Source information:
Chemical mapping of a 177-nucleotide RNA with DMS and 2A3. DMS adducts were read by reverse transcription with MarathonRT. The RNA was probed in 150 mM KOAc, 10 mM MgCl2 and 150 mM bicine (pH 8.5) at 24 C.
RNA sequence: GGGAACGACUCGAGUAGAGUCGAAAACCGUUUGAAAGCUGGGCUGUUUGAGGCGUGGGGUUCGUCCUUGCGUUUUGUAUGCAGCCUCGUGUAUCGAAAGGGAAUCAGGUUAAUAUUCCUGAACCGAUAACCGUUGGGUAUUCGUACCCAACGGUUAAAAAGAAACAACAACAACAAC
Reactivity to DMS in 0.01 (KOAc 150mM, MgCl2 10mM, bicine 150mM(pH8.5), 24C), signal-to-noise 2, nucleotides 027 to 126: c010c010g030u020u010u040g000a040a000a260g000c080u010g000g000g000c020u030g000u010u000u020g000a010g000g000c010g100u010g010g000g000g010u030u010c220g020u030c000c000u000u000g000c000g040u010u000u040u000g020u000a010u040g000c000a000g000c000c000u000c300g000u000g000u010a250u000c020g000a000a030a070g020g000g010a160a080u010c020a010g010g000u000u000a100a120u020a170u010u020c000c010u000g010a030a110c020c010g000a120
Reactivity to 2A3 in 0.01 (KOAc 150mM, MgCl2 10mM, bicine 150mM(pH8.5), 24C), signal-to-noise 4, nucleotides 027 to 126: c020c010g010u040u030u070g100a060a050a000g000c000u030g010g000g030c000u000g070u040u030u170g020a000g000g000c020g030u040g010g000g000g010u070u030c170g100u240c010c000u010u000g010c000g000u010u010u010u040g110u080a240u150g000c020a000g000c000c000u000c000g000u020g000u030a120u050c050g020a040a000a070g020g000g000a010a200u010c010a000g000g000u040u110a080a050u070a140u160u090c010c020u000g000a010a020c020c000g010a020